[RMDB]
RNA sequence: GGGAACGACUCGAGUAGAGUCGAAAAAAGAUCACAUACACACAUCUCACUCUGUUCCAGAGCGUGUAAGAUUUGUACUCUGGUACCAUCUCCAAAUAGCUUAAAUAAAGAUGCCAACUGGAUAUAACGUAGGAGUAUAGUUCGCUAUACUCCUACGAAAAGAAACAACAACAACAAC
Reactivity to 2A3 in 0.01 (KOAc 150mM, MgCl2 10mM, bicine 150mM(pH8.5), 24C), signal-to-noise 4, nucleotides 027 to 126: a010a010g100a030u080c030a030c020a070u090a020c020a000c010a000c010a090u000c010u000c030a030c020u050c030u040g100u180u000c050c020a020g000a010g030c070g010u060g030u070a070a040g070a140u070u050u220g040u040a030c030u000c020u050g030g000u010a010c000c020a030u000c010u000c040c000a040a100a090u070a070g010c040u130u180a060a090a060u160a060a130a030g080a030u080g040c000c020a070a050c050u040g000g040a060u080a020u070a290a040
Reactivity to DMS in 0.01 (KOAc 150mM, MgCl2 10mM, bicine 150mM(pH8.5), 24C), signal-to-noise 5, nucleotides 027 to 126: a070a060g000a060u010c030a030c100a100u010a040c040a040c080a110c080a070u000c040u010c050a100c030u010c040u010g020u000u000c030c030a060g010a030g030c090g010u000g010u000a070a100g010a100u000u010u000g010u000a110c050u000c030u010g000g010u000a090c200c120a050u000c050u000c030c030a060a080a070u000a110g020c060u000u000a040a050a090u010a090a090a080g000a040u000g010c050c040a080a090c090u000g000g010a080u010a060u020a060a130